The record gives the reactivity of an RNA of 207 nucleotides to 2A3 and DMS. The RNA was probed in 150 mM KOAc, 10 mM MgCl2 and 150 mM bicine (pH 8.5) at 24 C. Reactivities are given for positions 27 through 156. The data come from the RNA Mapping Database (RMDB), library RNAMAK. For DMS the reverse transcriptase was MarathonRT.

RNA sequence: GGGAACGACUCGAGUAGAGUCGAAAAACUGUUUCGACAGUCAAGUGACCUUUGUGAGAUGGGAGUAUUACAGAGCUUGCCCAAACCCAUUGGGUUUGUAACAAGCGACGAAGUAAUACGAACAUCUCACUCUGGUAUCAAUCACAUUCGUGUGAAACAGACCAAUAAAAUUCGUUUUAUUGGUCUGAAAAGAAACAACAACAACAAC
Reactivity to 2A3 in 0.01 (KOAc 150mM, MgCl2 10mM, bicine 150mM(pH8.5), 24C), signal-to-noise 9, nucleotides 027 to 156: a010c030u030g020u020u110u070c130g080a030c030a040g040u110c100a180a130g080u100g170a030c000c000u010u010u010g000u000g000a010g000a000u010g010g010g010a050g010u000a010u000u000a000c020a010g050a020g030c000u000u000g010c010c010c000a000a000a000c050c000c050a230u150u300g000g000g000u010u000u000g030u040a130a040c010a010a000g010c030g100a140c030g020a140a020g000u000a000a000u000a000c010g000a000a000c000a000u010c000u000c000a000c000u000c000u010g000g000u020a060u100c050a060a090u040c010a010c000a040u110u180c190g080u110g010u070g070a060a100a020
Reactivity to DMS in 0.01 (KOAc 150mM, MgCl2 10mM, bicine 150mM(pH8.5), 24C), signal-to-noise 5, nucleotides 027 to 156: a010c010u000g000u000u000u010c220g030a080c020a030g030u000c040a060a150g010u000g010a060c000c010u000u000u010g020u010g020a020g000a010u010g010g000g030a300g000u010a010u000u000a020c000a130g000a300g020c010u000u000g000c030c080c000a010a020a020c000c000c010a300u000u000g050g050g010u000u000u010g010u000a010a030c000a000a000g000c000g000a260c140g010a140a130g020u000a010a010u000a010c000g000a300a300c010a000u000c010u000c060a000c000u000c020u000g020g020u000a060u000c050a050a100u000c000a020c000a020u000u000c050g030u000g010u000g000a020a200a300